[RMDB]
RNA sequence: GGGAACGACUCGAGUAGAGUCGAAAAUCACAUGUUGAGGUCGGAGAUAAGAUUAAAUUGGCAUGUGAGCUCGAUUGGUACAGGCUUGUCAGCCCAGGAUCCAAUCUAUAGGAUCUUAACCUACCGCGAUUUUAACUCCUUUCGAGGAGUUAGAGUCAAAAGAAACAACAACAACAAC
Reactivity to DMS in 0.01 (KOAc 150mM, MgCl2 10mM, bicine 150mM(pH8.5), 24C), signal-to-noise 9, nucleotides 027 to 126: u000c010a030c020a020u000g010u000u010g020a070g010g020u000c050g010g010a160g010a170u010a090a110g000a060u000u000a040a090a160u010u000g010g010c010a020u000g010u000g010a030g010c080u000c090g010a050u000u000g000g010u000a080c110a130g000g010c020u000u010g010u010c210a080g010c010c010c090a140g010g000a060u000c000c000a040a060u000c100u010a110u010a110g010g010a040u000c030u000u000a070a090c070c060u000a060c080c060g010c210
Reactivity to 2A3 in 0.01 (KOAc 150mM, MgCl2 10mM, bicine 150mM(pH8.5), 24C), signal-to-noise 9, nucleotides 027 to 126: u020c000a000c010a010u030g010u030u050g050a040g020g040u030c030g100g080a240g050a270u170a190a040g010a030u080u160a090a220a130u060u030g010g000c000a000u010g010u010g020a010g000c030u030c060g040a040u020u070g010g000u040a040c030a050g000g050c020u110u190g180u250c090a010g000c000c010c010a020g030g050a020u030c000c000a020a030u010c040u040a130u050a030g010g000a010u010c000u060u030a050a050c000c010u030a050c020c040g050c050